[RMDB]
RNA sequence: GGGAACGACUCGAGUAGAGUCGAAAAGAUAUGGAUUCAGCUUUGAUCAUGCCACUCGGAAACGAGUGCAUGGGAGCUGGUCCUAAGUCAAAACAAUGCAAUGCGUGUUCGCACGCAUUGCAUUGAAGAACAUCAGGUGGUUCGCCACCUGAUGUUCAAAAGAAACAACAACAACAAC
Reactivity to DMS in 0.01 (KOAc 150mM, MgCl2 10mM, bicine 150mM(pH8.5), 24C), signal-to-noise 1, nucleotides 027 to 126: g000a080u000a300u050g020g000a030u000u010c000a000g000c010u010u000u010g000a100u000c000a000u000g020c160c110a010c000u010c000g010g020a100a160a180c000g010a010g000u000g000c000a010u000g000g000g000a020g030c000u000g000g020u010c000c000u000a010a080g000u000c020a090a090a110a250c000a000a000u000g000c000a000a000u000g040c000g030u000g020u000u000c270g030c000a000c000g010c020a010u000u000g000c000a000u000u000g000a040a110
Reactivity to 2A3 in 0.01 (KOAc 150mM, MgCl2 10mM, bicine 150mM(pH8.5), 24C), signal-to-noise 2, nucleotides 027 to 126: g060a000u040a000u130g010g010a070u300u300c000a000g000c010u250u250u110g120a110u190c000a010u020g110c090c040a060c010u030c000g040g030a010a060a070c010g020a000g000u010g000c000a000u000g010g000g010a010g000c000u000g000g000u000c000c000u010a200a040g040u070c020a000a040a050a130c000a000a040u020g000c020a010a010u020g020c040g000u060g130u100u160c300g070c180a040c000g040c000a030u000u000g000c010a000u000u000g000a000a000

This 177-nucleotide RNA was probed chemically with DMS and 2A3. For 2A3 the reverse transcriptase was SuperScript II with manganese. The reactions ran in a buffer of 150 mM KOAc, 10 mM MgCl2 and 150 mM bicine (pH 8.5), at 24 C.